RNA sequence: GGGAACGACUCGAGUAGAGUCGAAAAAGCCUGGUCGAUACGUCGACCAGGCAAUGCCGCCACAACGGCUUCCUGGCGUGGCGGAUCUCAUCCAACGGAGCAACGCUCCGGAUACGUCCGGAGCGAAAAAAGCUCUGCUUCUUCGGAAGCAGAGCAACAUCACUAAGAUGUUCGCAUCUUAGUGAUGAAAAGAAACAACAACAACAAC
Reactivity to 2A3 in 0.01 (KOAc 150mM, MgCl2 10mM, bicine 150mM(pH8.5), 24C), signal-to-noise 1, nucleotides 027 to 156: a000g300c000c000u000g000g010u000c000g000a010u000a090c200g100u030c000g020a010c020c000a010g000g000c000a000a000u000g000c000c000g040c000c000a000c010a020a010c020g050g040c000u100u080c030c000u050g020g040c030g000u010g010g000c000g000g000a010u020c070u010c030a080u070c090c050a060a040c120g010g010a010g020c010a060a080c020g000c000u000c000c020g060g000a000u020a030c190g110u000c000c000g000g010a000g000c000g000a020a000a000a000a000a000g000c010u030c000u000g000c000u010u000c000u030u020c050g110g000a020a000g010c000a010g010a000g000c000a000a000